[RMDB]
RNA sequence: GGGAACGACUCGAGUAGAGUCGAAAAAGCCACUUGCGAACUUGGGGCGACAGGCGGUGUCGAGACGUCCCCUUCGGAGAGAGUAUACGCUUUCGAUGAUGUAGGGGCAACCCCGACACCGCACAACAGUAAUAACCACUUUCGAGUGGUUAUUACUAAAAGAAACAACAACAACAAC
Reactivity to 2A3 in 0.01 (KOAc 150mM, MgCl2 10mM, bicine 150mM(pH8.5), 24C), signal-to-noise 9, nucleotides 027 to 126: a000g050c020c000a060c030u070u120g060c100g130a200a140c070u040u060g030g000g000g000c040g030a040c060a050g120g000c000g000g000u000g010u000c010g000a030g030a070c060g260u300c000c000c000c000u010u000c010g020g000a020g000a000g000a000g020u050a110u090a300c210g010c020u010u010u000c020g080a120u030g000a000u020g070u120a070g000g000g010g000c020a030a050c020c000c000c000g010a000c000a000c000c000g000c000a000c000a000a000c000
Reactivity to DMS in 0.01 (KOAc 150mM, MgCl2 10mM, bicine 150mM(pH8.5), 24C), signal-to-noise 7, nucleotides 027 to 126: a110g020c000c010a070c050u000u020g010c110g030a070a070c080u000u000g020g010g010g010c020g010a090c210a100g000g010c010g020g000u000g000u000c000g000a080g010a100c300g010u010c000c000c000c000u000u000c000g000g000a300g000a000g010a010g010u000a140u050a170c300g000c000u000u000u000c000g000a300u060g000a030u000g000u050a040g010g000g000g010c050a070a060c160c030c050c010g000a010c000a010c000c000g020c000a010c070a040a070c160
The record gives the reactivity of an RNA of 177 nucleotides to 2A3 and DMS. For DMS the reverse transcriptase was MarathonRT. It was measured as part of the RMDB libraries RFM100 and RFMREP. The RNA was probed in 150 mM KOAc, 10 mM MgCl2 and 150 mM bicine (pH 8.5) at 24 C.